Source: RMDB library RNAMAK, as collected in RNAgym. This 207-nucleotide RNA was probed chemically with 2A3. Conditions: 150 mM KOAc, 10 mM MgCl2 and 150 mM bicine (pH 8.5), 24 C.
[RMDB]
RNA sequence: GGGAACGACUCGAGUAGAGUCGAAAAUCACCCUUCGGGGUGAGGAUCCUAAGUCCGUGUUAAGUGGACGUGUCGUACCUUGGAUUUAUAUCGGAAACGAUAUUGUCAGGUACGCACGUCCUAAACACGGAUAUGGACGCGCCUUAGUUCGCUAAGGGGGAUUCUUCUAAUUCGUUAGAAGAAUCCCAAAAGAAACAACAACAACAAC
Reactivity to 2A3 in 0.01 (KOAc 150mM, MgCl2 10mM, bicine 150mM(pH8.5), 24C), signal-to-noise 4, nucleotides 027 to 156: u000c000a000c000c020c000u030u050c300g060g010g010g000u020g000a030g070g010a130u030c000c000u020a080a080g020u000c010c010g000u010g030u040u090a240a280g070u080g080g010a000c000g000u010g010u080c060g000u000a000c000c000u110u180g220g010a090u220u300u110a010u060a000u000c010g030g020a080a060a060c030g000a000u000a010u010u000g030u010c000a020g010g010u000a000c000g000c000a000c000g000u000c000c000u000a000a000a000c000a000c000g000g000a000u000a010u020g000g000a010c030g060c020g050c160c000u000u020a030g020u060u120c220g000c170u040a020a020g070g010